The data come from the RNA Mapping Database (RMDB), library OK2TST. The record gives the reactivity of an RNA of 177 nucleotides to DMS. DMS adducts were read by reverse transcription with MarathonRT. The reactions ran in a buffer of 150 mM KOAc, 10 mM MgCl2 and 150 mM bicine (pH 8.5), at 24 C.
[RMDB]
RNA sequence: GGGAACGACUCGAGUAGAGUCGAAAAAUUUAGAUUUCUUGUCUUUGUGUGUGCUCAGCCCAGGACUGAAUGCACAGCAGGCUGUCAGGAAGUAGUCAUGGAUUGAUGUGUCCGUAUUCGCCAUAACGGUCCCUCUCUGAUUCGUCAGAGAGGGACCAAAAGAAACAACAACAACAAC
Reactivity to DMS in 0.01 (KOAc 150mM, MgCl2 10mM, bicine 150mM(pH8.5), 24C), signal-to-noise 1, nucleotides 027 to 126: a000u010u010u000a110g030a140u000u000u000c010u000u000g010u000c030u000u000u030g030u000g000u000g010u000g000c020u000c030a040g010c050c050c190a260g020g000a170c010u000g040a030a020u040g000c040a000c030a010g030c040a000g010g020c050u000g010u000c000a010g000g000a030a120g040u000a030g020u000c090a070u020g020g010a060u020u000g010a080u000g000u010g010u000c030c030g000u000a140u010u000c030g000c040c070a110u030a060a030c080